[RMDB]
RNA sequence: GGGAACGACUCGAGUAGAGUCGAAAACGUGCUGUGAAGUGUCGGGUUAAGUCCCUUAACGAGCGCAACCCCUAUCGUUAGUUGCCCACGGUUCGGCCGGGUACUCUAGCGAGACUGCCGGCGUUAAGAUCUUUCGUAAGUUCGCUUACGAAAGAUCAAAAGAAACAACAACAACAAC
Reactivity to 2A3 in 0.01 (KOAc 150mM, MgCl2 10mM, bicine 150mM(pH8.5), 24C), signal-to-noise 1, nucleotides 027 to 126: c040g070u030g010c030u080g000u130g150a180a100g000u060g130u100c010g040g030g030u010u060a040a060g230u070c000c010c030u000u010a060a030c080g020a020g050c000g000c020a020a160c000c000c000c000u070a040u100c000g030u030u000a000g000u000u030g020c060c000c060a080c000g000g090u040u110c120g030g000c000c000g010g000g010u020a050c000u010c000u030a010g020c000g000a010g040a050c040u060g040c020c010g070g090c000g010u070u010a010a020
Reactivity to DMS in 0.01 (KOAc 150mM, MgCl2 10mM, bicine 150mM(pH8.5), 24C), signal-to-noise 3, nucleotides 027 to 126: c080g020u000g000c020u010g000u010g010a140a080g040u010g020u010c030g040g000g000u000u010a110a180g010u000c010c000c000u010u000a040a070c080g000a100g000c170g030c070a100a110c060c010c010c050u010a100u000c020g000u020u000a030g000u000u000g000c000c010c070a300c040g000g020u000u020c190g020g040c010c040g010g000g000u000a010c110u000c010u000a040g010c050g000a020g020a090c090u000g020c030c020g020g010c020g000u000u000a060a090